An RNA of 177 nucleotides, treated with DMS and 2A3 and read out base by base. The RNA was probed in 150 mM KOAc, 10 mM MgCl2 and 150 mM bicine (pH 8.5) at 24 C. The DMS profile rests on 7,279 reads.
RNA sequence: GGGAACGACUCGAGUAGAGUCGAAAAUAGAAUUUUGUGAGAUCACACCCAUGCAUCUUAUGUCAUUUUAACUGAUUUCAGGUUACAGACAUCCACUCCCAUGCCGCAGGCUUCCAUAGGAUGAUUGCAACUAUCAGUACUUCGGUACUGAUAGUUGAAAAGAAACAACAACAACAAC
Reactivity to DMS in 0.01 (KOAc 150mM, MgCl2 10mM, bicine 150mM(pH8.5), 24C), signal-to-noise 7, nucleotides 027 to 126: u020a110g020a080a300u010u000u010u010g020u000g010a090g020a080u000c040a050c060a100c040c030c030a110u000g000c090a020u010c050u000u000a040u000g010u010c050a060u000u000u000u000a030a080c080u000g010a140u010u000u000c120a090g000g000u000u010a060c250a080g000a070c050a040u000c070c040a080c070u000c020c010c030a080u010g010c050c050g000c050a070g000g000c070u000u000c040c030a060u000a060g000g010a070u010g000a130u010u000g010
Reactivity to 2A3 in 0.01 (KOAc 150mM, MgCl2 10mM, bicine 150mM(pH8.5), 24C), signal-to-noise 4, nucleotides 027 to 126: u130a030g150a050a040u070u100u130u160g060u040g030a110g030a070u110c010a010c000a020c020c020c010a020u080g010c010a050u000c020u060u100a050u100g030u050c040a110u050u080u100u170a070a050c060u040g090a180u080u160u170c100a060g030g030u030u050a060c020a030g040a030c010a030u040c020c000a050c010u020c000c010c000a010u040g030c000c020g070c030a030g040g020c020u040u030c030c010a030u040a060g050g030a030u090g030a040u090u150g020